[RMDB]
An RNA of 177 nucleotides, treated with DMS and 2A3 and read out base by base. For 2A3, 1,773 sequencing reads were counted. The RNA was probed in 150 mM KOAc, 10 mM MgCl2 and 150 mM bicine (pH 8.5) at 24 C. DMS adducts were read by reverse transcription with MarathonRT.
RNA sequence: GGGAACGACUCGAGUAGAGUCGAAAAAGCUGAAUACACACACGUAUGCACACACACACACACACAAUUUAUGUGUGUUCUGCUGAGACUAUAUCCAUGGUAACUUGUCUUCUUGGUUACAAAAUUGUGCGUAACGCAUAUUCGUAUGCGUUACGCAAAAAGAAACAACAACAACAAC
Reactivity to DMS in 0.01 (KOAc 150mM, MgCl2 10mM, bicine 150mM(pH8.5), 24C), signal-to-noise 2, nucleotides 027 to 126: a080g020c040u000g010a070a030u010a070c030a040c020a020c080a050c080g000u000a040u000g000c020a050c000a050c030a030c060a040c040a060c060a040c020a020c030a010c070a070a060u000u020u010a100u030g010u000g000u000g020u000u000c050u010g000c050u000g010a070g010a080c090u000a090u000a060u000c020c010a090u010g010g010u000a030a020c030u010u000g030u000c110u010u010c050u010u010g000g000u010u010a010c060a070a050a040a070u000u000g000
Reactivity to 2A3 in 0.01 (KOAc 150mM, MgCl2 10mM, bicine 150mM(pH8.5), 24C), signal-to-noise 2, nucleotides 027 to 126: a030g020c070u050g050a040a030u110a020c020a000c020a000c000a000c110g000u100a040u110g030c020a050c060a010c080a000c010a000c000a000c000a110c020a000c000a020c030a070a160u110u270u070a180u120g010u010g000u000g000u040u000c020u010g020c010u030g050a010g000a050c030u040a030u020a000u300c030c000a030u070g110g000u000a010a010c010u060u060g010u080c010u040u080c010u080u100g010g000u050u040a020c000a010a140a050a180u180u130g060